Chemical mapping of a 177-nucleotide RNA with DMS and 2A3. High DMS reactivity at an A or C suggests that its Watson-Crick edge is free. The reactions ran in a buffer of 150 mM KOAc, 10 mM MgCl2 and 150 mM bicine (pH 8.5), at 24 C. As a SHAPE reagent, 2A3 marks flexible, mostly unpaired nucleotides at the ribose 2'-OH.

RNA sequence: GGGAACGACUCGAGUAGAGUCGAAAAAAACGGACUGAUCAAUAAGCCUGUGAACCACUGCUUUGAUUUUGUGCAUAAGGAGAAGGAUUAAUUAGAAAUCAUCAGAUGCAUGACACCAGUGUUCCACGCCAUAUAUGUUUUUCGAAACAUAUAUGGCAAAAGAAACAACAACAACAAC
Reactivity to DMS in 0.01 (KOAc 150mM, MgCl2 10mM, bicine 150mM(pH8.5), 24C), signal-to-noise 8, nucleotides 027 to 126: a040a050a040c060g020g000a040c030u000g010a130u010c140a100a090u000a110a050g010c010c020u000g020u000g000a120a100c080c020a050c050u000g000c090u000u000u000g010a110u010u000u000u000g020u000g000c030a030u010a060a070g010g010a080g020a080a080g000g010a040u000u000a080a120u020u010a110g010a070a040a030u000c010a060u010c040a070g000a040u000g000c020a030u000g000a040c100a050c260c030a040g010u000g000u000u000c010c010a100c280
Reactivity to 2A3 in 0.01 (KOAc 150mM, MgCl2 10mM, bicine 150mM(pH8.5), 24C), signal-to-noise 7, nucleotides 027 to 126: a000a010a010c040g000g020a030c020u060g020a060u170c040a060a050u120a120a010g020c010c010u030g020u030g040a040a030c030c010a020c040u020g040c030u090u070u090g050a120u110u130u100u110g010u030g000c020a010u020a100a070g130g030a100g030a120a040g100g020a040u040u060a070a110u110u120a120g120a100a060a000u010c010a020u020c020a020g010a110u020g010c010a010u030g000a000c010a000c020c000a010g010u000g020u050u030c010c010a030c070